[RMDB]
RNA sequence: GGGAACGACUCGAGUAGAGUCGAAAAACACUCUAGAGUACGCGCUGAUCCUCUAGGCUAGCGGAUCCUAGGACCAUGGCGCCAUGUACACAUGCAUGUCAUGGUACACGAGCAGAUAGUACCACUACCUGAAGCAUCGAUUCGUCGAUGCUUCAGGAAAAGAAACAACAACAACAAC
Reactivity to DMS in 0.01 (KOAc 150mM, MgCl2 10mM, bicine 150mM(pH8.5), 24C), signal-to-noise 2, nucleotides 027 to 126: a090c130a120c050u000c000u000a050g020a090g020u000a090c070g000c120g000c050u020g010a110u000c040c050u010c030u010a060g000g000c100u000a070g040c080g020g010a090u000c010c060u000a090g050g000a100c000c030a020u000g020g000c000g000c250c030a020u000g000u000a100c260a140c020a020u000g000c040a090u000g000u000c020a010u000g000g030u000a040c230a110c130g020a040g000c050a030g000a070u020a070g000u000a270c040c010a160c110u000a070
Reactivity to 2A3 in 0.01 (KOAc 150mM, MgCl2 10mM, bicine 150mM(pH8.5), 24C), signal-to-noise 2, nucleotides 027 to 126: a000c030a020c010u030c040u040a040g010a000g080u090a020c030g040c010g030c040u040g080a070u040c020c010u020c010u020a030g000g110c090u080a060g000c040g090g010a050u000c000c000u060a040g030g010a020c020c030a040u000g050g010c060g000c060c000a020u090g110u180a040c300a010c020a110u040g010c040a020u190g030u010c010a020u000g000g000u030a020c060a010c060g090a070g000c000a010g050a100u090a020g000u070a050c000c050a090c040u140a110